[RMDB]
RNA sequence: GGGAACGACUCGAGUAGAGUCGAAAAAUAUGGUGACACGCAACAGAUUCCAUACAUCAACAGAGUUACUGGAUUUCCGUACCCGGAACACUUUUCGAAGUUGGAAGUUGACGAAGUGGAGACAAGAGGACUGUAGGAAAUUCGUUUCCUACAGUCCAAAAGAAACAACAACAACAAC
Reactivity to 2A3 in 0.01 (KOAc 150mM, MgCl2 10mM, bicine 150mM(pH8.5), 24C), signal-to-noise 4, nucleotides 027 to 126: a000u170a030u100g090g030u060g040a040c020a020c110g070c010a030a060c010a090g080a050u090u000c000c000a030u060a220c020a050u040c020a010a050c030a090g050a000g050u060u070a120c030u050g050g010a080u050u050u070c050c050g060u130a110c030c000c000g000g000a030a000c030a020c040u020u030u020u110c080g070a050a030g000u010u010g010g040a130a100g040u070u070g050a130c050g050a090a030g010u070g060g030a070g030a040c080a120a060g030a080
Reactivity to DMS in 0.01 (KOAc 150mM, MgCl2 10mM, bicine 150mM(pH8.5), 24C), signal-to-noise 4, nucleotides 027 to 126: a040u010a080u020g030g010u000g020a060c050a040c050g020c050a060a110c110a070g010a250u000u000c000c010a020u020a030c100a070u010c040a080a180c270a070g000a140g030u010u000a190c050u020g000g020a150u010u010u010c090c050g000u030a090c110c000c010g040g020a070a070c090a030c010u000u020u000u000c240g010a040a030g010u000u010g000g010a010a070g000u010u020g000a090c120g000a030a110g020u000g010g000a100g010a150c110a060a100g000a300
The record gives the reactivity of an RNA of 177 nucleotides to 2A3 and DMS. Conditions: 150 mM KOAc, 10 mM MgCl2 and 150 mM bicine (pH 8.5), 24 C. DMS (dimethyl sulfate) methylates the pairing face of unpaired adenines and cytosines. For 2A3, 2,827 sequencing reads were counted.